This 177-nucleotide RNA was probed chemically with 2A3 and DMS.
Reactivities are given for positions 27 through 126.
Source: RMDB library OK1LIB, as collected in RNAgym.
Conditions: 150 mM KOAc, 10 mM MgCl2 and 150 mM bicine (pH 8.5), 24 C.
[RMDB]
RNA sequence: GGGAACGACUCGAGUAGAGUCGAAAAGCGGGAACUCAACAACAGCGGUGCCGCAAAGCGUUCGGUAAGAAGCCGCGCGGCGUCCAUCGGUGCCAGUCGUAGGUCACGCGGCAGGCGGGUCAGCACGCCGAUGUCAACUUUUCGAAGUUGACAUCGGAAAAGAAACAACAACAACAAC
Reactivity to 2A3 in 0.01 (KOAc 150mM, MgCl2 10mM, bicine 150mM(pH8.5), 24C), signal-to-noise 5, nucleotides 027 to 126: g070c030g000g020g050a050a050c030u010c060a040a070c030a050a070c030a080g050c040g060g000u040g020c000c010g000c020a040a090a030g020c040g120u110u080c010g070g050u090a140a080g050a110a000g070c000c000g010c000g000c000g000g010c010g020u050c010c010a080u080c030g050g040u070g050c040c030a050g040u050c020g040u080a080g000g120u070c010a020c090g010c000g010g000c010a000g020g040c000g020g010g010u030c020a010g020c030a030c050g000
Reactivity to DMS in 0.01 (KOAc 150mM, MgCl2 10mM, bicine 150mM(pH8.5), 24C), signal-to-noise 2, nucleotides 027 to 126: g000c070g000g000g040a060a030c040u010c090a110a060c120a090a090c180a080g000c060g000g010u000g000c020c010g000c030a080a300a050g010c040g000u010u000c020g000g000u010a160a090g030a080a200g000c010c020g000c300g010c010g000g000c050g000u000c050c050a060u030c070g000g000u030g000c020c020a040g000u000c060g000u010a070g000g000u010c080a090c080g010c070g000g040c020a080g030g020c000g000g000g000u000c020a100g020c090a040c070g000